[RMDB]
RNA sequence: GGGAACGACUCGAGUAGAGUCGAAAAGAAAGAAAGAAGAAUCACCAGGAGGCAAGGAUCCUCAACUACGUUAUUCGGGCACCUUAAGUUGAGAGGAGCUAGUGGUGCGCCCGGCCUGGAGAUCAAAACACGACAGGCGGGUUCGCCCGCCUGUCAAGUUAUGUAUCUUCUUCGGAAGAUACAUAACAAAAGAAACAACAACAACAAC
Reactivity to DMS in 0.01 (KOAc 150mM, MgCl2 10mM, bicine 150mM(pH8.5), 24C), signal-to-noise 1, nucleotides 027 to 156: g020a130a040a090g010a090a080a090g000a110a150g000a210a120u000c020a100c010c010a040g000g000a160g020g030c020a120a140g020g020a070u000c100c000u010c000a040a020c040u010a070c080g030u000u000a110u020u000c040g020g010g000c020a110c020c070u000u000a050a180g020u000u000g020a070g020a080g010g000a010g050c040u000a040g040u020g040g000u000g020c090g000c040c020c000g030g000c020c000u020g020g040a090g020a040u000c060a020a020a010a090c060a080c060g000a020c010a030g040g020c010g010g010g000u000u000c230g010c000c000c000g000c010c000u000g030u000c020a010a090
Reactivity to 2A3 in 0.01 (KOAc 150mM, MgCl2 10mM, bicine 150mM(pH8.5), 24C), signal-to-noise 3, nucleotides 027 to 156: g050a000a070a020g050a040a130a000g100a070a000g040a040a030u020c020a010c030c000a000g020g020a030g020g030c020a010a220g030g000a010u010c000c000u000c000a000a000c010u150a040c120g150u210u100a070u060u110c010g010g030g000c000a010c000c030u150u220a060a000g000u000u000g010a000g000a000g010g000a010g010c010u040a030g070u010g100g010u010g000c030g010c020c000c000g000g000c010c000u010g010g000a040g000a030u030c040a000a080a010a040c080a030c100g000a000c000a000g000g010c020g030g000g010u040u020c080g030c010c000c000g040c000c000u010g000u000c000a000a000
Annotation: Structure probing data (DMS and 2A3) for a 207-nucleotide construct. The data come from the RNA Mapping Database (RMDB), library M2RFPK. Reactivities are given for positions 27 through 156. The RNA was probed in 150 mM KOAc, 10 mM MgCl2 and 150 mM bicine (pH 8.5) at 24 C.